[RMDB]
An RNA of 207 nucleotides, treated with DMS and 2A3 and read out base by base.
For DMS the reverse transcriptase was MarathonRT.
Source: RMDB library OK3TST, as collected in RNAgym.
For 2A3, 1,096 sequencing reads were counted.
2A3 is a SHAPE reagent: it acylates the 2'-hydroxyl of flexible nucleotides of all four kinds.
RNA sequence: GGGAACGACUCGAGUAGAGUCGAAAAAAGGUAGUGAAUAUGAGUAUGUUAUUUACGCACAAACUUCUGACACUGCACAUGCUUGCAAUGUUAAUAGGUUUAAUGUUGCAAUAACUCGUGCCAAAAAGGGUAUAUUUUGCAUAAUGUGUGAUAGAGAUGAGAGAAUAGUCUUCGGACUAUUCUCUCAAAAAGAAACAACAACAACAAC
Reactivity to DMS in 0.01 (KOAc 150mM, MgCl2 10mM, bicine 150mM(pH8.5), 24C), signal-to-noise 1, nucleotides 027 to 156: a050a060g030g000u000a050g020u010g020a100a060u000a060u010g000a080g020u000a080u000g010u010u000a090u000u000u010a040c040g000c070a050c040a020a080a040c020u000u000c060u000g010a110c030a060c040u010g040c030a040c060a110u000g030c170u020u000g000c010a000a000u000g010u000u010a010a060u000a140g040g030u000u000u000a070a020u010g020u000u000g070c000a040a050u000a040a070c060u000c010g090u000g000c060c060a050a030a070a070a120g000g000g030u020a030u000a070u000u000u000u000g000c040a080u000a070a070u020g010u000g040u000g010a160u000a040g000a140g000a210
Reactivity to 2A3 in 0.01 (KOAc 150mM, MgCl2 10mM, bicine 150mM(pH8.5), 24C), signal-to-noise 2, nucleotides 027 to 156: a000a010g080g000u060a020g000u020g090a060a020u150a020u200g000a020g040u060a040u110g020u080u090a110u110u120u110a080c080g010c020a000c020a050a120a030c050u100u060c040u060g000a000c000a000c030u040g000c000a010c000a030u060g030c040u020u000g000c000a000a020u040g000u030u060a080a050u110a280g260g010u150u000u000a010a020u020g020u020u020g000c000a000a000u050a020a000c020u050c180g020u040g040c020c030a000a050a040a040a060g070g040g070u020a040u000a040u060u110u080u070g020c050a020u060a160a100u150g010u000g020u030g040a040u010a130g000a030g010a040

The reactions ran in a buffer of 150 mM KOAc, 10 mM MgCl2 and 150 mM bicine (pH 8.5), at 24 C.